[RMDB]
RNA sequence: GGGAACGACUCGAGUAGAGUCGAAAAGAAACCAUCCCCGUCGUCUUCCAGGAUGGGAAAGCAUGCUCUGCGCAGAUCGGUUGCUCACCGCGAAUUGUACUGAUGAAGCGUGGACCGUCCUCGUCGAGGAUGGGAAAGCAUGCACGUACGGAAACCAGGUCUACUUUAGGUUCGCCUAAAGUAGACCAAAAGAAACAACAACAACAAC
Reactivity to 2A3 in 0.01 (KOAc 150mM, MgCl2 10mM, bicine 150mM(pH8.5), 24C), signal-to-noise 2, nucleotides 027 to 156: g020a020a000a000c040c020a010u080c080c000c000c030g060u050c010g000u010c150u060u020c010c000a020g020g000a010u030g040g000g000a120a020a000g000c000a010u010g000c000u000c000u060g010c020g000c000a010g010a120u050c000g010g000u090u040g040c090u110c130a100c120c020g080c020g110a010a040u200u150g090u190a030c000u020g100a190u040g030a170a010g000c010g000u000g020g000a010c000c000g000u000c020c000u050c010g220u180c290g040a000g040g000a000u020g050g000g050a080a000a020g000c000a000u010g010c000a000c030g040u070a040c050g010g020a100a020a030c010c170a020
An RNA of 207 nucleotides, treated with 2A3 and read out base by base. For 2A3 the reverse transcriptase was SuperScript II with manganese. The 2A3 profile rests on 805 reads. Conditions: 150 mM KOAc, 10 mM MgCl2 and 150 mM bicine (pH 8.5), 24 C.